[RMDB]
RNA sequence: GGGAACGACUCGAGUAGAGUCGAAAAGAAAGAAAGAAAGAAAGUAUCUACGGAAGAAAGUGGUCAAAGAAAGAAAGAAAGUUUCUUUGUUGUAGAUACGAAGAAAAGAAAAGACCACUGAAAGAAAGGGUAGAUAAUUCUUCGGAAUUAUCUACCCAAAAGAAACAACAACAACAAC
Reactivity to DMS in 0.01 (KOAc 150mM, MgCl2 10mM, bicine 150mM(pH8.5), 24C), signal-to-noise 2, nucleotides 027 to 126: g010a100a150a100g010a160a100a070g000a140a090a070g010a120a070a150g000u010a010u000c000u020a000c010g020g010a110a070g010a060a110a040g050u000g000g010u010c000a100a050a060g000a100a040a030g000a030a110a080g020a070a080a070g000u010u010u000c000u000u000u000g000u010u010g010u000a000g000a010u000a010c010g000a050a120g000a030a050a070a030g000a070a030a040a060g010a040c000c000a000c000u000g000a060a140a100g000a120a110a090
Reactivity to 2A3 in 0.01 (KOAc 150mM, MgCl2 10mM, bicine 150mM(pH8.5), 24C), signal-to-noise 2, nucleotides 027 to 126: g050a010a060a030g100a040a130a090g110a050a070a000g130a040a080a000g000u000a000u000c000u040a000c070g110g140a080a080g050a210a130a000g030u000g030g010u020c010a020a020a020g020a040a040a020g020a010a200a000g210a200a200a030g070u010u000u000c000u000u000u120g060u020u140g000u020a000g000a000u030a000c000g020a000a040g000a000a070a000a050g150a000a290a000a000g010a000c030c040a010c000u040g050a130a150a050g110a140a060a000
This 177-nucleotide RNA was probed chemically with DMS and 2A3. Values cover nucleotides 27 to 126. 2A3 adducts were read by reverse transcription with SuperScript II with manganese. The reactions ran in a buffer of 150 mM KOAc, 10 mM MgCl2 and 150 mM bicine (pH 8.5), at 24 C. It was measured as part of the RMDB library OK1LIB.